[RMDB]
RNA sequence: GGGAACGACUCGAGUAGAGUCGAAAACUACAUAGUUUCGACUAUGUAGAAACCAUUUGGAAGCAUGCAGAUGCAUAUGGACGAGGGCAACUAACCUAUUGCGAACAGCAGGUUUCGACCUGCUGAAGCCGGAUGUUUAAUUCGUUAAACAUCCGGCAAAAGAAACAACAACAACAAC
Reactivity to 2A3 in 0.01 (KOAc 150mM, MgCl2 10mM, bicine 150mM(pH8.5), 24C), signal-to-noise 2, nucleotides 027 to 126: c010u000a000c000a040u010a000g030u040u030u110c130g070a000c000u000a000u010g020u000a020g050a040a010a000c020c020a050u100u000u150g090g060a070a010g050c000a010u110g000c030a040g020a260u070g010c040a000u030a050u150g050g020a030c080g030a050g020g090g000c030a060a020c070u040a030a030c000c010u020a100u090u300g050c040g060a080a080c000a000g030c000a000g020g020u020u040u020c140g050a020c000c000u000g000c000u020g000a010a000
Reactivity to DMS in 0.01 (KOAc 150mM, MgCl2 10mM, bicine 150mM(pH8.5), 24C), signal-to-noise 2, nucleotides 027 to 126: c010u010a030c000a000u000a020g000u000u000u020c120g000a020c000u000a010u000g000u000a020g010a070a160a150c010c000a130u010u000u040g000g000a170a090g000c060a020u000g000c100a140g010a080u000g010c020a040u010a030u020g030g010a110c070g000a060g000g070g010c100a060a050c100u000a060a080c080c060u000a090u000u000g020c140g000a120a260c010a010g000c010a010g000g010u000u010u000c140g000a040c010c010u010g020c010u000g000a070a090